[RMDB]
RNA sequence: GGGAACGACUCGAGUAGAGUCGAAAAGAUAUGGAGGUGCGUCUUCGAUAAGCUCCUGUCGGAAACGACAGAAGAGCUUUUGACGAAGUGCACCUCCUAAGUCAAAAGCACAGCUUCGGCUGUGCAACAGAUACGUUGAGUUCGCUCAACGUAUCUGAAAAGAAACAACAACAACAAC
Reactivity to DMS in 0.01 (KOAc 150mM, MgCl2 10mM, bicine 150mM(pH8.5), 24C), signal-to-noise 4, nucleotides 027 to 126: g010a020u010a250u010g000g000a010g000g010u000g020c010g010u010c000u000u010c000g020a140u010a010a030g010c010u000c000c000u000g000u000c000g010g000a080a040a100c000g020a010c000a000g010a120a110g010a010g000c000u010u000u000u000g020a250c150g000a010a020g000u000g000c000a010c000c000u000c000c000u000a000a050g000u010c030a140a120a120a180g000c000a000c000a010g020c010u000u010c280g050g000c000u000g020u000g020c010a040a060
Reactivity to 2A3 in 0.01 (KOAc 150mM, MgCl2 10mM, bicine 150mM(pH8.5), 24C), signal-to-noise 5, nucleotides 027 to 126: g020a020u020a010u090g010g000a000g000g000u010g010c030g170u190c040u010u000c060g230a250u060a300a000g000c000u000c000c000u000g000u000c010g000g010a040a010a020c010g030a010c020a010g110a190a040g000a060g000c000u010u020u030u140g280a200c050g000a010a010g000u010g000c000a010c000c000u000c000c000u000a000a000g000u000c000a020a030a040a020g000c000a000c000a010g030c000u140u200c300g210g000c000u010g000u000g000c000a010a000
Structure probing data (DMS and 2A3) for a 177-nucleotide construct. The RNA was probed in 150 mM KOAc, 10 mM MgCl2 and 150 mM bicine (pH 8.5) at 24 C.